[RMDB]
The record gives the reactivity of an RNA of 177 nucleotides to DMS and 2A3. The 2A3 profile rests on 2,617 reads. The DMS profile rests on 2,775 reads.

RNA sequence: GGGAACGACUCGAGUAGAGUCGAAAAGAGACCCGCACUUCUAGUUGCCAGCAAUACCCUUGAGGUAGUUGGGUACACUAGGAGGACUGCCGCUGCUAAAGCGGAGGAAGGAACGGGCAACGGUAGGCUGUUUAUGAGUGUUCGCACUCAUAAACAGAAAAGAAACAACAACAACAAC
Reactivity to DMS in 0.01 (KOAc 150mM, MgCl2 10mM, bicine 150mM(pH8.5), 24C), signal-to-noise 3, nucleotides 027 to 126: g000a150g000a140c010c000c010g020c120a070c000u000u000c000u000a010g000u000u000g000c000c000a100g010c030a050a090u000a010c000c000c020u010u020g010a210g020g010u020a010g010u010u000g000g000g010u000a010c190a010c000u000a000g000g000a020g000g010a030c000u000g010c000c010g020c010u000g030c200u030a040a120a020g040c000g000g000a000g000g000a040a030g000g010a090a180c020g000g000g020c040a110a050c100g000g020u010a080g000g030
Reactivity to 2A3 in 0.01 (KOAc 150mM, MgCl2 10mM, bicine 150mM(pH8.5), 24C), signal-to-noise 2, nucleotides 027 to 126: g070a010g050a080c000c010c010g000c010a040c000u010u000c000u010a000g000u020u020g010c010c000a010g040c010a030a040u000a010c000c030c000u120u300g070a170g130g000u000a010g000u010u000g020g000g000u030a040c050a020c080u010a010g000g000a010g000g010a010c030u060g000c000c010g000c010u060g000c090u270a210a050a020g000c000g000g010a000g010g010a020a020g020g010a050a040c010g000g000g030c050a060a020c010g160g050u070a050g080g080